[RMDB]
RNA sequence: GGGAACGACUCGAGUAGAGUCGAAAACAAUAGACUAGACGUAGUGGCGAAAAACGACCUGAUAGGGUGCUGCAGAGGCCCACUACUAGGCUAGUAUAAAAAUCUCUGCAGCAUAAACGUCAACAAACGAUGACUCAUAUUUCGAUAUGAGUCAUCGAAAAGAAACAACAACAACAAC
Reactivity to 2A3 in 0.01 (KOAc 150mM, MgCl2 10mM, bicine 150mM(pH8.5), 24C), signal-to-noise 4, nucleotides 027 to 126: c010a000a020u160a160g280a050c020u010a010g010a030c010g010u000a010g000u020g020g000c090g120a120a010a000a020a040c060g050a100c000c030u090g030a100u150a110g100g000g100u030g000c000u000g000c000a000g000a000g050g000c010c000c000a020c010u010a010c000u000a030g000g090c000u000a000g020u010a080u110a160a020a000a030a010u060c000u000c020u010g000c000a010g010c010a010u070a050a180a010c040g130u110c050a020a030c050a110a150a020
Reactivity to DMS in 0.01 (KOAc 150mM, MgCl2 10mM, bicine 150mM(pH8.5), 24C), signal-to-noise 2, nucleotides 027 to 126: c080a050a120u080a080g020a080c000u000a030g030a290c050g000u000a020g020u010g000g010c300g030a020a070a000a140a130c160g000a080c050c000u010g010a100u060a120g000g020g000u000g000c000u000g000c020a010g000a010g000g000c300c000c000a020c040u010a000c030u040a080g020g000c010u000a020g010u010a020u010a000a000a070a060a090u020c000u000c000u000g020c010a020g000c000a010u010a010a090a040c130g000u010c140a030a020c270a120a040a120